Source information: An RNA of 207 nucleotides, treated with 2A3 and DMS and read out base by base. The DMS profile rests on 4,392 reads. DMS adducts were read by reverse transcription with MarathonRT. 2A3 adducts were read by reverse transcription with SuperScript II with manganese.

RNA sequence: GGGAACGACUCGAGUAGAGUCGAAAAGACCAGUUGCACGAGUCUCAAUUGGACAAAAUGCCAGCACUUCCGGCUAAAGGUAACUUGAACCUCCGUGACAUCUUAGAGUCGGACUUCGCGUUCGCGUAACGCCAAAUCAAUACGACUCACUAUAGAGUAAAGGCUCAUUUUUCGAAAUGAGCCUUUAAAAAGAAACAACAACAACAAC
Reactivity to 2A3 in 0.01 (KOAc 150mM, MgCl2 10mM, bicine 150mM(pH8.5), 24C), signal-to-noise 1, nucleotides 027 to 156: g050a070c030c060a040g070u110u080g030c050a030c070g000a020g040u040c040u010c110a120a230u100u150g020g040a080c030a010a090a020a000u130g000c010c050a060g000c020a070c060u190u080c040c050g010g040c020u090a040a040a040g010g010u050a100a040c020u030u080g070a050a010c000c000u090c070c030g000u040g050a080c050a030u020c070u020u100a050g000a000g150u000c000g000g030a040c030u070u060c050g000c000g010u000u000c070g050c100g270u260a020a030c000g000c010c010a000a100a030u070c040a020a020u030a020c020g030a000c020u000c020a010c000u030a080u070a050g090a040g070
Reactivity to DMS in 0.01 (KOAc 150mM, MgCl2 10mM, bicine 150mM(pH8.5), 24C), signal-to-noise 3, nucleotides 027 to 156: g010a120c010c000a280g040u000u010g010c010a090c030g010a270g020u010c010u000c040a090a200u010u020g000g010a110c030a070a060a060a030u000g020c000c040a110g010c050a090c050u010u000c050c010g060g010c040u000a070a080a070g010g000u000a040a100c060u010u010g000a050a130c030c010u020c020c060g000u020g000a070c050a070u010c030u000u000a130g010a040g020u000c020g030g000a120c050u000u000c090g010c030g020u000u000c050g000c230g060u000a050a020c010g020c030c070a040a080a110u000c040a040a080u010a040c010g010a060c000u000c000a070c040u010a080u000a080g020a190g000